This 177-nucleotide RNA was probed chemically with DMS and 2A3. Reactivities are given for positions 27 through 126. The reactions ran in a buffer of 150 mM KOAc, 10 mM MgCl2 and 150 mM bicine (pH 8.5), at 24 C. It was measured as part of the RMDB library OK2TST. For DMS the reverse transcriptase was MarathonRT.

[RMDB]
RNA sequence: GGGAACGACUCGAGUAGAGUCGAAAAGGGAUCAUGGUGGCUCAGAGCAGAGCUGGAGCAUGCAGCAGGAGGUGACCUCAAUGGCCAAAUUAGACAUGGUCCUGUUGCCACCUCUCAAAGUCUCCACCAGAAUAGCACAUUUCGAUGUGCUAUUCUGAAAAGAAACAACAACAACAAC
Reactivity to DMS in 0.01 (KOAc 150mM, MgCl2 10mM, bicine 150mM(pH8.5), 24C), signal-to-noise 6, nucleotides 027 to 126: g000g010g000a050u010c050a050u010g020g010u000g000g030c070u000c090a100g010a120g010c100a090g010a100g000c060u000g010g010a050g010c150a090u000g010c100a060g010c130a110g010g000a040g020g020u000g000a040c030c050u000c060a040a090u000g010g020c010c010a030a070a110u010u010a120g000a140c210a070u000g010g010u010c000c110u000g010u000u000g010c020c010a020c010c000u000c000u010c080a070a070a120g000u010c010u010c010c040a090c180
Reactivity to 2A3 in 0.01 (KOAc 150mM, MgCl2 10mM, bicine 150mM(pH8.5), 24C), signal-to-noise 4, nucleotides 027 to 126: g040g000g010a010u060c030a050u130g100g010u040g020g040c020u030c050a070g040a030g110c050a020g020a020g030c040u030g010g010a020g030c070a060u150g000c030a030g020c010a020g020g020a000g000g020u030g030a040c000c000u030c040a050a100u130g010g000c000c000a080a080a070u200u180a090g050a090c090a090u030g000g010u030c000c000u020g010u010u020g010c000c000a010c020c020u000c000u000c020a080a080a020g030u010c010u000c020c010a040c030